[RMDB]
RNA sequence: GGGAACGACUCGAGUAGAGUCGAAAAUCCUAAGUCCUUUGAGCAUGACUAUAAUCACGAGUUGUCAGUCGGAAACGACUUGGAUUUACUCGUGGUAGUCAUGUCCAAAGGAUAUGGAAAAGGUAUCGAGUAAAAGUUCGCUUUUACUCGAUACCAACAACCAAAGGCACUUCGGUGCCUUUGGUUGAAAAGAAACAACAACAACAAC
Reactivity to 2A3 in 0.01 (KOAc 150mM, MgCl2 10mM, bicine 150mM(pH8.5), 24C), signal-to-noise 2, nucleotides 027 to 156: u030c010c010u030a120a020g060u020c000c010u020u010u000g030a020g000c000a000u000g000a000c010u030a010u090a200a210u180c000a000c010g000a000g000u000u030g000u000c010a010g020u000c030g030g080a120a080a080c000g020a010c020u060u150g140g000a030u160u160u220a010c000u000c000g000u000g000g020u000a000g020u000c010a000u000g010u030c000c000a000a000a000g000g000a000u010a030u010g000g000a040a130a060a020g000g010u000a000u000c000g000a000g010u000a000a000a000a000g020u060u080c130g080c100u030u000u000u000a000c030u010c010g000a000u020a000c010c000a000a000